[RMDB]
RNA sequence: GGGAACGACUCGAGUAGAGUCGAAAAACUAGGCGCUAUCCUUCUUGAGCUAUAUUAGGUAGGGGCUUAGGGGAGCAAGGGGCACUUUAGUGCGAGAACCUGCUUCGUGUCUAGGGAGUGGAGGGGCUAAGGUGUGAUGAGUGCUUUAGCAAACAUCUCUCACUGGCCCAACCACGUACACCUGAGACAAUGCCCAUCUGCCAUGGCACAAGGGCUUUUCACCUCUGUGUGAGCCCUUGUUGUUUUGUCUAUCACUCCUGAGCUAAAGCCUACUGUUCGCAGUAGGCAAAAGAAACAACAACAACAAC
Reactivity to DMS in 0.01 (KOAc 150mM, MgCl2 10mM, bicine 150mM(pH8.5), 24C), signal-to-noise 3, nucleotides 027 to 266: a110c060u000a040g000g000c040g030c040u000a080u010c030c010u000u010c030u000u010g000a100g020c080u010a070u010a090u020u010a090g000g010u010a040g000g000g010g020c010u010u000a050g000g010g010g010a030g000c040a020a020g000g000g000g010c010a020c050u010u010u010a100g040u000g000c010g010a130g030a100a170c020c020u010g000c030u000u010c030g010u010g010u000c020u000a110g000g010g000a110g020u000g010g000a080g010g000g000g000c000u000a010a010g000g000u000g000u000g010a010u010g000a030g030u000g000c030u010u010u020a110g030c020a030a050a020c000a020u000c000u010c030u000c010a040c010u000g010g020c000c010c020a020a050c020c020a010c010g000u010a050c170a180c000c020u000g000a030g010a030c020a070a060u000g000c010c010c010a060u020c070u000g000c040c020a060u010g000g000c030a040c040a010a000g000g000g000c010u020u000u000u000c010a010c010c180u040c230u000g020u010g000u000g000a040g010c000c000c000u000u000g000u010u010g000u000u000u010u010g000u000c050u010a220u010c050a130c090u010c050c030u000g000a090g020c080u010a080a110a190
Reactivity to 2A3 in 0.01 (KOAc 150mM, MgCl2 10mM, bicine 150mM(pH8.5), 24C), signal-to-noise 4, nucleotides 027 to 266: a000c060u060a050g010g000c020g020c100u070a080u170c010c030u050u120c020u080u110g060a030g020c080u100a060u050a080u300u200a070g000g020u020a010g010g010g020g020c030u080u130a080g090g100g020g020a020g000c060a070a110g050g010g030g030c030a010c030u200u270u250a130g030u000g020c040g000a140g050a120a090c000c010u010g010c010u020u010c030g060u010g000u020c010u020a020g000g010g030a050g020u030g000g030a050g000g010g020g010c000u040a090a040g050g000u050g020u030g030a020u020g000a030g110u030g010c040u190u200u170a060g000c000a010a040a010c010a020u000c020u000c010u010c020a060c060u010g000g000c000c000c010a010a010c000c010a010c020g010u030a030c090a110c030c000u060g080a030g000a020c010a010a030u050g010c020c000c010a060u070c030u020g010c010c010a050u030g010g000c000a000c000a010a010g010g000g020c010u130u070u130u110c030a040c030c110u210c170u240g080u040g010u010g100a010g000c010c010c020u000u010g010u010u010g010u010u060u030u030g020u000c020u040a110u120c040a040c070u070c020c020u080g110a030g090c060u180a110a140a060